[RMDB]
RNA sequence: GGGAACGACUCGAGUAGAGUCGAAAAUGGGACGGCACUUUAUCAAAUAUGAAUCUUUAAAAACGUCACAACAGAUAAUCCAAUAGAGAUGCCACACAACGGACGGGUUGACAAUCCGGAGCUGAGGAUAAUCACGGGACUUCGGUCCCGUGAUUAUAAAAGAAACAACAACAACAAC
Reactivity to DMS in 0.01 (KOAc 150mM, MgCl2 10mM, bicine 150mM(pH8.5), 24C), signal-to-noise 1, nucleotides 027 to 126: u000g000g000g000a010c150g000g000c000a060c150u040u070u060a120u010c100a030a210a140u110a160u000g000a150a090u010c030u000u020u000a000a020a050a170a000c100g000u000c000a000c030a030a100c040a030g000a020u000a000a050u040c070c200a060a100u040a060g000a110g050a040u000g050c000c000a000c110a060c150a080a220c120g000g000a040c070g000g060g020u000u000g000a230c090a080a070u070c000c080g040g000a160g000c190u000g000a160g030g040
Reactivity to 2A3 in 0.01 (KOAc 150mM, MgCl2 10mM, bicine 150mM(pH8.5), 24C), signal-to-noise 1, nucleotides 027 to 126: u030g000g000g000a030c000g000g000c010a000c020u080u010u050a000u030c230a100a070a000u120a000u210g130a020a000u050c030u000u130u000a110a180a070a020a000c210g010u150c120a010c070a250a130c120a090g060a140u030a030a100u020c030c130a000a000u020a100g000a000g010a020u020g050c000c000a030c020a010c000a080a080c000g000g080a000c010g060g000g000u050u000g060a030c000a050a020u000c030c000g000g000a170g000c120u060g060a010g020g140
An RNA of 177 nucleotides, treated with DMS and 2A3 and read out base by base. For 2A3 the reverse transcriptase was SuperScript II with manganese. The RNA was probed in 150 mM KOAc, 10 mM MgCl2 and 150 mM bicine (pH 8.5) at 24 C. The data come from the RNA Mapping Database (RMDB), library OK1LIB.